[RMDB]
RNA sequence: GGGAACGACUCGAGUAGAGUCGAAAAGCAGUCAGUACGCUGACUGAGGGAAACGGGAGCCGGGCUUGGGACAAGAGCCAUCCCAAGUCCAAGGCCAAGUAGGCUCUAGUGAUGGUACGCCAUCACAAAAACUGGUCUACCUUCGGGUAGACCAGAACUAACAGGAAAUGUUCGCAUUUCCUGUUAGAAAAGAAACAACAACAACAAC
Reactivity to DMS in 0.01 (KOAc 150mM, MgCl2 10mM, bicine 150mM(pH8.5), 24C), signal-to-noise 1, nucleotides 027 to 156: g000c010a050g000u000c020a030g020u010a130c300g020c020u000g030a010c000u010g030a110g000g000g000a040a080a100c160g010g000g000a120g040c040c030g030g020g040c010u020u030g020g020g000a010c020a020a060g000a110g000c100c010a300u000c040c000c010a000a070g020u000c000c010a020a000g040g010c020c040a080a110g050u010a090g020g010c000u020c010u000a120g010u010g000a020u000g000g030u000a170c300g110c000c000a010u050c010a010c020a080a000a030a110a080c010u010g000g000u000c000u000a010c000c000u000u000c300g000g030g000u000a000g010a010c000c000a000g000a000a150
Reactivity to 2A3 in 0.01 (KOAc 150mM, MgCl2 10mM, bicine 150mM(pH8.5), 24C), signal-to-noise 5, nucleotides 027 to 156: g010c010a000g000u000c000a000g000u040a040c180g050c130u000g000a000c000u010g010a050g020g030g020a080a170a120c100g010g040g040a050g020c020c040g000g010g010c000u010u000g010g000g000a000c020a090a060g000a010g000c000c000a010u000c000c000c000a000a000g000u000c000c010a070a030g030g000c040c030a080a040g050u140a110g060g000c000u010c010u020a050g000u000g000a010u000g020g010u040a030c250g050c040c000a000u010c000a010c010a000a060a000a020a010c000u000g010g000u000c000u000a000c010c010u030u080c220g080g000g000u010a000g000a000c010c000a000g000a000a020

Structure probing data (DMS and 2A3) for a 207-nucleotide construct. For DMS the reverse transcriptase was MarathonRT. The 2A3 profile rests on 7,396 reads. Reactivities are given for positions 27 through 156.